[RMDB]
RNA sequence: GGGAACGACUCGAGUAGAGUCGAAAAGCUUCUGUGACAGACAGUGAAAACACAAAUCAAAGAGAAGCUGCAAGUCAUGGAUUUGGAAAAACAUCAGGGAAUUCAUUUAAAGUAAAUAGCUGCAAAGACCACAUUGGAAAGUCAAUGCCAAAUGUCCCGUAUGCGGGAAGUUCGCUUCCCGCAUACGAAAAGAAACAACAACAACAAC
Reactivity to 2A3 in 0.01 (KOAc 150mM, MgCl2 10mM, bicine 150mM(pH8.5), 24C), signal-to-noise 1, nucleotides 027 to 156: g050c000u090u000c020u020g100u060g000a050c020a060g100a010c000a050g010u090g120a050a060a190a000c140a010c020a090a120a020u200c050a100a190a070g020a070g020a150a000g000c000u010g000c030a140a000g010u020c020a060u040g010g010a050u050u170u120g060g020a100a120a060a010a020c000a090u080c030a010g010g040g070a060a070u080u090c040a020u090u120u300a060a110a000g010u050a010a110a130u090a090g000c080u090g000c040a000a000a110g030a040c050c020a020c070a080u080u060g080g000a090a000a050g020u090c040a000a040u060g010c000c060a090a000a060u120g000u040c030c030

The data come from the RNA Mapping Database (RMDB), library OK3TST. Chemical mapping of a 207-nucleotide RNA with 2A3. Reactivities are given for positions 27 through 156. For 2A3 the reverse transcriptase was SuperScript II with manganese.